[RMDB]
RNA sequence: GGGAACGACUCGAGUAGAGUCGAAAAGAAGACUAGCCGUAGUGGCGAGCUCCCUGGGUGGUCUAAGUCCUGAGUACAGGACAGUCGUCAGUAGUUCGACGUGAGCACUAGCCCACCUCGAGAUGCUACGUGGACGAGGGCAUGCCCAAGACACACCUUAACCCUGGCGGGGGUCGCUAGGGUGAAAUCACAUUAUGUGAUGGGGGUACGACCUGAUAGGGUGCUGCAGAGGCCCACUAGCAGGCUAGUAUAAAAAUCUCUGCAAAAGUUCAACAUUCGUGUUGAACAAAAGAAACAACAACAACAAC
Reactivity to 2A3 in 0.01 (KOAc 150mM, MgCl2 10mM, bicine 150mM(pH8.5), 24C), signal-to-noise 3, nucleotides 027 to 266: g110a130a010g110a010c000u000a000g010c000c010g020u010a000g000u000g000g000c000g000a000g000c000u000c000c000c000u000g000g010g000u010g000g000u000c000u000a020a010g000u000c000c010u010g020a060g140u040a040c000a020g010g040a030c020a070g110u020c000g010u000c010a020g010u020a020g030u140u060c020g010a010c020g000u010g010a030g000c030a090c300u250a100g000c000c010c000a000c010c000u010c000g090a120g020a200u280g040c030u050a040c110g300u120g080g010a010c000g010a090g010g000g010c010a040u160g020c020c000c000a000a000g030a010c100a000c000a000c100c010u010u000a010a000c000c000c000u010g010g000c030g020g130g020g160g170u280c000g000c000u010a000g000g000g000u000g000a010a010a020u000c000a000c010a030u160u300a120u300g000u010g000a010u020g010g010g000g010g000u000a010c000g000a000c000c000u010g010a010u010a030g070g010g010u020g000c040u080g000c020a010g000a010g010g010c000c040c000a000c000u040a050g190c100a040g000g000c000u000a000g000u010a010u010a020a010a000a010a010u050c000u000c010u000g010c010a000a070a100a110
Reactivity to DMS in 0.01 (KOAc 150mM, MgCl2 10mM, bicine 150mM(pH8.5), 24C), signal-to-noise 2, nucleotides 027 to 266: g030a260a080g010a080c000u000a060g030c000c000g000u000a010g010u000g000g000c000g000a300g020c000u000c010c000c010u010g000g000g040u010g020g020u020c010u000a010a020g010u030c030c000u040g010a080g010u000a000c000a020g010g000a010c010a300g000u000c000g010u000c000a070g030u010a020g000u000u000c010g030a030c170g000u010g010a090g000c020a220c300u050a100g010c000c020c000a040c000c090u000c010g010a060g030a140u020g020c000u000a010c000g000u000g000g010a020c020g040a030g030g000g000c020a030u000g020c010c000c000a270a000g000a050c000a100c030a020c000c000u000u000a220a010c000c020c010u000g000g010c030g050g020g010g010g010u020c000g030c010u000a000g000g010g030u000g000a010a030a010u000c000a010c010a230u010u050a160u000g030u000g000a000u000g000g010g030g010g020u000a000c030g000a090c000c000u010g000a140u000a200g000g000g030u000g010c010u010g020c030a060g000a000g000g010c030c000c000a060c000u050a080g000c060a130g010g010c000u000a010g000u000a020u030a010a000a010a030a000u040c010u050c030u000g000c000a130a080a160a140